[RMDB]
RNA sequence: GGGAACGACUCGAGUAGAGUCGAAAAUGAGGUGCCGUUUCCCCAACGCCGAUGAGGGGGACGAAAGAAAUAUCGGCUGGUUUGGCUAAAUUAGGCCGGCAAAAGCUAGCCAGACAAGAUUAAAUAGACGGAUAAUCCUGUAGUAGAUCCUGGGUCACUAUGUAAAGAAGUUCGCUUCUUUACAUAGAAAAGAAACAACAACAACAAC
Reactivity to 2A3 in 0.01 (KOAc 150mM, MgCl2 10mM, bicine 150mM(pH8.5), 24C), signal-to-noise 3, nucleotides 027 to 156: u080g010a020g020g050u050g030c020c000g020u010u050u100c010c000c000c020a050a010c060g040c020c000g000a030u030g020a050g020g000g000g010g010a020c040g040a040a100a040g100a020a110a020u190a020u040c020g010g000c010u020g040g000u040u020u030g000g000c020u030a060a070a150u210u120a110g000g040c030c050g010g000c020a170a090a020a000g000c000u010a000g020c010c000a020g000a020c030a030a030g010a030u110u160a020a040a110u120a080g050a030c030g020g020a010u050a070a040u090c020c030u070g030u050a040g010u000a020g010a020u020c000c010u000g000g000g020u000c010a010
Reactivity to DMS in 0.01 (KOAc 150mM, MgCl2 10mM, bicine 150mM(pH8.5), 24C), signal-to-noise 2, nucleotides 027 to 156: u020g040a030g010g020u000g010c030c030g020u000u000u000c000c050c030c030a060a180c060g020c030c000g080a060u000g010a200g020g030g030g040g010a070c020g030a080a120a180g000a100a080a120u000a100u000c020g000g020c010u000g020g020u000u010u000g000g000c010u000a040a070a160u000u000a110g000g010c000c010g030g030c050a040a110a090a110g020c040u010a010g000c010c000a080g010a040c010a040a090g010a130u000u000a040a100a140u020a090g010a140c040g020g020a190u010a040a060u000c020c000u020g020u000a140g000u000a070g010a050u000c010c000u000g010g020g040u000c060a180